Chemical mapping of a 207-nucleotide RNA with 2A3.
Reactivities are given for positions 27 through 156.
The reactions ran in a buffer of 150 mM KOAc, 10 mM MgCl2 and 150 mM bicine (pH 8.5), at 24 C.
RNA sequence: GGGAACGACUCGAGUAGAGUCGAAAAAGCAGUUAUAUCGAAAAACGAUAUAACUGCAAUUAGGAUGGGGUGUGAUAGGUGGCACGGAGAAUUUUGGAUUCUCAGGGAUGGGUUCGAUUCUCAUAGUCCUAAAAGCAGUGUGUCACUACGCACUGCACUACUUUUACGGCUUCGGCCGUAAAAGUAGAAAAGAAACAACAACAACAAC
Reactivity to 2A3 in 0.01 (KOAc 150mM, MgCl2 10mM, bicine 150mM(pH8.5), 24C), signal-to-noise 1, nucleotides 027 to 156: a010g020c010a010g000u000u000a000u000a000u020c040g080a300a000a000a000a100c010g010a010u000a000u000a010a010c010u000g000c000a000a020u010u040a020g040g010a030u060g000g060g000g030u040g000u010g020a090u020a120g030g050u080g030g000c010a010c120g060g010a010g040a050a020u010u100u200u190g110g030a040u000u020c030u010c020a040g050g000g060a010u060g010g020g000u020u110c010g030a070u110u020c000u000c000a040u060a070g070u030c000c020u040a050a100a060a000g000c000a000g000u000g010u000g000u070c040a010c210u110a030c010g010c000a000c000u000g000c000a000